[RMDB]
RNA sequence: GGGAACGACUCGAGUAGAGUCGAAAACAGCCACUCGCAGAGCAGAGCAAAUUAAGCUAACAGCCGAGCAGCAAACGCUGUUCUCCGUACGGCAGAACUCCAGCCCGUAUGAUCGGCCUAACGUGACUUCCCCUAUUAUAUUCGUAUAAUAGGGGAAAAAAGAAACAACAACAACAAC
Reactivity to DMS in 0.01 (KOAc 150mM, MgCl2 10mM, bicine 150mM(pH8.5), 24C), signal-to-noise 9, nucleotides 027 to 126: c100a100g010c030c070a100c060u000c070g020c040a040g000a100g020c020a090g010a060g010c050a070a090a110u020u030a090a140g000c010u000a080a110c210a150g000c020c030g000a150g010c030a030g010c060a080a080a110c210g000c010u000g000u000u010c030u010c070c030g010u000a030c060g010g010c050a100g010a080a080c110u010c070c060a090g000c080c000c030g000u010a020u020g000a080u000c030g010g000c020c040u010a060a060c130g000u000g000a100c130
Reactivity to 2A3 in 0.01 (KOAc 150mM, MgCl2 10mM, bicine 150mM(pH8.5), 24C), signal-to-noise 8, nucleotides 027 to 126: c030a020g070c000c020a050c020u020c030g020c030a020g010a010g060c020a010g020a010g050c030a020a070a140u210u110a200a030g030c030u050a070a060c000a050g010c010c010g030a000g010c000a000g000c020a140a130a110c140g000c010u010g000u070u000c030u000c020c010g020u040a020c020g020g020c030a040g050a140a040c060u050c070c010a020g010c000c010c010g010u040a030u040g080a070u030c010g010g000c010c010u050a070a010c050g060u060g060a040c020